[RMDB]
RNA sequence: GGGAACGACUCGAGUAGAGUCGAAAAAUCGCGGCCUGCGCGCGCGCGUACGCCGCGAAACGGUGAGCCUGCUGCGUGCGCUUGGAACGACCGCCAUCAUCGUGACGCAUGAGGCGGAGGAGGCGCAGGCCCGAUUAAUGUUCGCAUUAAUCGGGCCAAAAGAAACAACAACAACAAC
Reactivity to 2A3 in 0.01 (KOAc 150mM, MgCl2 10mM, bicine 150mM(pH8.5), 24C), signal-to-noise 2, nucleotides 027 to 126: a000u050c020g000c030g050g000c020c010u020g000c000g010c000g000c000g000c020g020c000g000u020a020c030g000c000c010g000c020g000a000a000a000c040g040g030u060g050a030g060c040c100u090g010c020u030g010c030g050u050g020c000g000c000u050u140g090g030a080a030c020g110a100c040c020g020c040c000a300u030c000a010u010c020g100u120g240a120c130g020c040a000u030g010a000g000g020c000g000g000a010g010g060a050g010g000c000g000c020a060
Reactivity to DMS in 0.01 (KOAc 150mM, MgCl2 10mM, bicine 150mM(pH8.5), 24C), signal-to-noise 3, nucleotides 027 to 126: a040u010c010g030c140g010g000c010c040u000g000c000g000c000g020c180g020c190g000c030g030u000a010c160g020c010c060g000c020g020a040a040a060c100g000g010u010g030a170g030c080c050u000g030c040u000g000c080g000u010g010c000g000c000u000u010g000g010a170a140c110g010a150c020c010g000c000c000a090u000c010a020u000c040g030u010g000a150c200g000c230a040u000g010a060g020g000c000g000g000a240g000g000a110g000g010c010g000c010a020

An RNA of 177 nucleotides, treated with 2A3 and DMS and read out base by base. The data come from the RNA Mapping Database (RMDB), library OK2TST. For 2A3, 1,927 sequencing reads were counted. The DMS profile rests on 2,229 reads. For 2A3 the reverse transcriptase was SuperScript II with manganese. Reactivities are rounded to 0.1 and cut off at 0 and 3.